[RMDB]
Background:
This 170-nucleotide RNA was probed chemically with DMS and 2A3. The DMS profile rests on 14,195 reads. The 2A3 profile rests on 15,652 reads. The RNA was probed in 150 mM KOAc, 10 mM MgCl2 and 150 mM bicine (pH 8.5) at 24 C.

RNA sequence: GGGAACGACUCGAGUAGAGUCGAAAAGAACUCUCUCUAGAUUCCCAGAGAGAAUCGAGAGAAAACUGGCUCUCCCUUAGCCAUCCGAGUAGGACGUCUGUCCUCCUACGGAUGCCCAGGUCGGACCGCACGCGAUUCUUCGGAAUCGCGAAAAGAAACAACAACAACAAC
Reactivity to DMS in 0.01 (KOAc 150mM, MgCl2 10mM, bicine 150mM(pH8.5), 24C), signal-to-noise 6, nucleotides 027 to 129: g030a180a160c180u020c050u030c000u000c010u050a000g000a120u040u010c020c020c090a120g080a000g020a120g050a070a030u040c010g000a000g050a000g040a050a040a070a050c140u020g060g000c070u020c030u020c120c070c050u080u040a070g060c170c020a060u030c020c020g000a000g040u040a000g020g020a030c010g050u080c250u110g040u000c000c010u020c020c000u030a130c010g020g020a020u050g000c120c050c090a160g010g040u000c030g020g000a220c040c030g030c090a130
Reactivity to 2A3 in 0.01 (KOAc 150mM, MgCl2 10mM, bicine 150mM(pH8.5), 24C), signal-to-noise 5, nucleotides 027 to 129: g060a050a050c020u000c000u000c010u000c010u060a050g000a030u020u000c020c030c150a040g080a010g000a010g000a060a010u020c010g010a000g000a000g000a030a040a010a050c050u030g020g000c010u010c000u030c060c030c010u080u080a000g030c040c020a000u000c000c000g000a000g010u010a000g000g000a000c010g190u120c230u270g000u000c010c000u020c000c000u120a160c000g000g000a000u000g000c010c010c010a030g000g000u010c000g000g000a010c010c010g060c050a070